About this RNA:
The record gives the reactivity of an RNA of 177 nucleotides to 2A3. Reactivities are given for positions 27 through 126. 2A3 adducts were read by reverse transcription with SuperScript II with manganese. The RNA was probed in 150 mM KOAc, 10 mM MgCl2 and 150 mM bicine (pH 8.5) at 24 C.
RNA sequence: GGGAACGACUCGAGUAGAGUCGAAAAAGAAUUCAGGAUAAGUAAGUUCUUCAUAAGAGAACAUUUCCAUUACGAAUUCAGUCGCAAAUUGUAGAAUUAGCUACUCUACGAUUUAGUGAGCGUUAGUGCGUGUCCCAAUGUUCGCAUUGGGACACGCAAAAGAAACAACAACAACAAC
Reactivity to 2A3 in 0.01 (KOAc 150mM, MgCl2 10mM, bicine 150mM(pH8.5), 24C), signal-to-noise 1, nucleotides 027 to 126: a000g000a000a000u000u020c010a030g050g080a020u000a140a000g150u000a030a030g000u110u000c000u020u040c000a020u100a250a040g030a010g010a020a000c000a000u000u000u000c000c000a050u080u190a020c070g020a000a000u020u020c020a050g140u010c000g000c000a000a000a000u000u000g000u000a000g010a020a020u130u000a050g080c040u080a020c030u040c040u010a000c000g000a050u000u000u020a140g000u020g000a110g090c050g050u080u230a080g000u010